Description
The record gives the reactivity of an RNA of 207 nucleotides to 2A3 and DMS. 2A3 adducts were read by reverse transcription with SuperScript II with manganese. The data come from the RNA Mapping Database (RMDB), library OK3TST. The reactions ran in a buffer of 150 mM KOAc, 10 mM MgCl2 and 150 mM bicine (pH 8.5), at 24 C. The DMS profile rests on 2,796 reads.
[RMDB]
RNA sequence: GGGAACGACUCGAGUAGAGUCGAAAAGAUUAAGUGGGAGCGUCGCCCUUUCGGUGCAUCGGAUAUUAAUUAGCCAGUGCGUGGCACUACGCAUAUUGAUGUCUACUUUGGCGUAGACUAUGCCAAUUUAAGGAUUGGUGGGCAAUCCAGCCCUAGACGCUAUUUAGUGGUUCGCCACUAAAUAGCGAAAAGAAACAACAACAACAAC
Reactivity to 2A3 in 0.01 (KOAc 150mM, MgCl2 10mM, bicine 150mM(pH8.5), 24C), signal-to-noise 4, nucleotides 027 to 156: g080a020u210u200a060a040g060u140g030g030g000a070g010c010g020u050c040g040c010c000c040u040u040u040c020g030g000u030g040c020a050u110c060g050g000a010u010a040u100u240a160a060u090u100a070g010c000c030a020g020u010g020c070g010u030g030g050c070a020c080u060a010c020g010c020a010u020a110u050u160g080a120u120g040u000c000u020a050c050u160u190u130g070g000c030g000u000a010g040a010c010u020a030u090g030c000c010a050a030u020u100u100a100a060g090g010a020u020u010g010g000u040g000g000g010c000a000a070u050c040c020a030g010c000c000c000u040a060g020a040
Reactivity to DMS in 0.01 (KOAc 150mM, MgCl2 10mM, bicine 150mM(pH8.5), 24C), signal-to-noise 1, nucleotides 027 to 156: g000a120u000u000a080a090g010u000g000g020g030a100g040c040g010u000c030g000c000c000c040u030u000u000c020g020g000u000g030c050a080u010c020g000g010a060u010a040u000u100a090a140u000u000a150g000c010c030a090g020u010g000c020g030u000g040g000c000a130c020u000a100c010g020c040a090u000a100u020u000g000a080u000g020u010c060u000a100c020u000u010u000g020g000c070g040u000a060g020a070c070u000a030u010g000c000c010a060a060u000u000u010a090a140g040g010a050u000u010g000g040u010g020g020g000c040a070a130u000c080c040a220g030c000c000c000u000a080g010a200